Source information:
This 207-nucleotide RNA was probed chemically with 2A3 and DMS. It was measured as part of the RMDB library OK3TST. For 2A3, 2,443 sequencing reads were counted. Conditions: 150 mM KOAc, 10 mM MgCl2 and 150 mM bicine (pH 8.5), 24 C.
[RMDB]
RNA sequence: GGGAACGACUCGAGUAGAGUCGAAAACGAUCGUGAUCGAAGAAACUUCAGAGAUCAUCGGUGUGGCCAUCGCGGCGAUCAUUUUGAUCUUCACGUUUGGUUCCUUGGUGGCCGCUGGACUCCCACUGCUGAUCGCAGUGAUCGGUGUAGGUAUUGAGCAUACGCAAAAUUUCGAUUUUGCGUAUGCAAAAGAAACAACAACAACAAC
Reactivity to 2A3 in 0.01 (KOAc 150mM, MgCl2 10mM, bicine 150mM(pH8.5), 24C), signal-to-noise 4, nucleotides 027 to 156: c030g020a040u070c070g050u030g010a020u040c030g000a050a020g030a110a210a080c120u140u070c020a050g020a020g010a070u010c010a000u110c050g040g050u010g020u050g060g020c010c000a010u000c010g000c030g040g040c110g020a010u010c050a050u030u190u140u270g100a110u050c020u140u080c110a050c160g060u040u090u090g080g000u060u050c000c010u000u060g000g000u010g020g000c000c000g000c010u040g010g040a050c030u020c040c000c020a020c010u020g030c000u050g040a090u110c090g000c060a060g070u060g140a020u070c060g000g040u080g060u060a110g100g050u120a130u120u190g020a040
Reactivity to DMS in 0.01 (KOAc 150mM, MgCl2 10mM, bicine 150mM(pH8.5), 24C), signal-to-noise 2, nucleotides 027 to 156: c030g020a080u010c060g010u020g010a070u000c020g020a300a190g000a100a110a120c130u000u000c030a060g010a300g020a030u010c020a020u000c030g000g020u000g010u020g000g030c030c000a020u000c000g000c050g010g010c300g000a020u010c000a260u000u010u000u020g000a020u000c010u010u000c020a050c050g020u000u000u000g000g000u000u000c030c020u000u000g040g010u000g010g030c020c020g000c010u020g000g000a080c030u000c030c010c060a110c050u000g010c050u000g010a080u000c050g010c010a150g020u000g000a030u000c020g000g020u000g020u000a040g000g030u000a130u000u000g000a300